[RMDB]
RNA sequence: GGGAACGACUCGAGUAGAGUCGAAAAUUAAAGCAUUUGAAUGCCCUAAGUGUAGAACAAAAGCUACUGAAUUGGAAGCGUUUUGUAGUGAUUGCGACCACUGUUUUGAAAUCAAGCAUAUUGGUGACACCGCGUUAGAUUUCGAUCUAACGCGGUGAAAAGAAACAACAACAACAAC
Reactivity to 2A3 in 0.01 (KOAc 150mM, MgCl2 10mM, bicine 150mM(pH8.5), 24C), signal-to-noise 2, nucleotides 027 to 126: u050u030a080a020a080g050c080a060u140u110u230g140a020a050u230g000c000c010c010u010a070a080g020u000g090u150a030g010a210a000c030a050a040a000a000g050c000u030a030c010u000g190a200a000u010u180g140g050a060a090g080c000g170u000u000u000u120g020u020a000g000u000g010a020u000u000g050c000g000a010c000c000a050c060u000g050u180u080u010u090g090a150a100a100u260c070a100a100g050c030a190u120a160u290u120g090g030u100g100a100
Reactivity to DMS in 0.01 (KOAc 150mM, MgCl2 10mM, bicine 150mM(pH8.5), 24C), signal-to-noise 2, nucleotides 027 to 126: u060u010a010a130a110g000c130a010u030u030u020g000a110a100u060g030c010c000c000u020a030a030g020u000g000u000a100g020a180a110c010a030a000a050a300g000c060u040a010c050u020g000a030a010u020u060g040g040a060a020g010c240g000u000u010u010u010g020u000a000g020u000g000a250u000u010g020c140g000a300c140c050a010c000u000g000u000u020u060u060g000a050a040a030u000c000a050a050g010c170a040u040a090u030u000g010g000u040g000a300
Chemical mapping of a 177-nucleotide RNA with 2A3 and DMS. The RNA was probed in 150 mM KOAc, 10 mM MgCl2 and 150 mM bicine (pH 8.5) at 24 C. For DMS, 1,853 sequencing reads were counted. For 2A3, 507 sequencing reads were counted.